[RMDB]
RNA sequence: GGGAACGACUCGAGUAGAGUCGAAAAUGAGUCCGAAAGGACGAAACGGAUGUACCGCUUCUUGUCUCGACCUCGACCUGGACUAGUGAUCGAGGGAGGCUCAACCUCACGCCCGCUGGGUAGAUGUUCGAAGAUCUAAGUUCGCUUAGAUCUUCGAAAAAGAAACAACAACAACAAC
Reactivity to DMS in 0.01 (KOAc 150mM, MgCl2 10mM, bicine 150mM(pH8.5), 24C), signal-to-noise 2, nucleotides 027 to 126: u030g000a150g010u010c000c000g010a080a150a220g010g040a040c030g020a060a020a030c040g000g010a140u030g030u010a170c030c040g070c020u010u010c040u000u010g050u000c020u000c050g000a190c030c000u000c010g000a010c020c040u000g010g030a220c140u000a040g000u000g000a100u000c030g030a010g000g000g020a010g000g000c050u010c040a090a160c030c040u000c050a070c060g000c010c000c030g000c130u000g010g010g030u010a060g050a090u020g010u010
Reactivity to 2A3 in 0.01 (KOAc 150mM, MgCl2 10mM, bicine 150mM(pH8.5), 24C), signal-to-noise 2, nucleotides 027 to 126: u090g000a000g010u020c010c010g010a070a070a040g040g000a000c010g000a020a030a010c010g020g040a070u160g130u280a160c000c010g010c000u010u010c080u110u170g020u040c030u030c070g180a160c020c000u010c020g000a000c010c030u010g040g190a170c040u060a040g040u040g130a300u030c000g000a020g000g040g000a010g000g000c000u010c010a050a140c000c000u040c040a020c040g050c000c000c000g250c180u210g000g010g000u020a110g050a120u080g070u000